[RMDB]
RNA sequence: GGGAACGACUCGAGUAGAGUCGAAAAGGUGCGGAGCUCAGUCCACAGAUUAUCUCGAUGAUCAUAUCGACGAUAUUCACCUUCUUGCUAGCGGAUCUUUCGAGAUCCGUUUUUUCAGGUCAUGGAGGGCUUAACAAGAAUUCGUUCUUGUUAAGCCAAAAGAAACAACAACAACAAC
Reactivity to 2A3 in 0.01 (KOAc 150mM, MgCl2 10mM, bicine 150mM(pH8.5), 24C), signal-to-noise 7, nucleotides 027 to 126: g070g000u080g020c040g040g040a040g020c040u040c090a040g070u010c020c020a050c030a050g040a040u020u030a010u020c010u000c010g030a040u060g080a210u150c060a110u190a000u140c010g010a020c120g000a010u010a030u030u030c020a060c030c000u040u030c020u050u100g020c030u020a010g000c000g010g000a000u000c010u030u080u110c180g050a020g000a010u000c000c000g000u000u000u000u000u010u040c030a030g010g070u030c040a060u060g030g040a040g060
Reactivity to DMS in 0.01 (KOAc 150mM, MgCl2 10mM, bicine 150mM(pH8.5), 24C), signal-to-noise 5, nucleotides 027 to 126: g000g020u010g000c070g010g000a090g020c060u000c100a080g010u010c030c050a100c160a130g010a040u010u010a010u000c010u000c000g010a030u000g000a130u030c270a120u020a060u000c010g000a010c130g010a040u010a010u000u020c030a110c040c010u000u010c040u000u000g000c110u000a070g000c000g010g010a000u000c000u000u000u030c170g000a020g000a010u000c000c000g010u000u000u010u010u010u000c060a030g000g000u000c080a080u020g010g000a100g000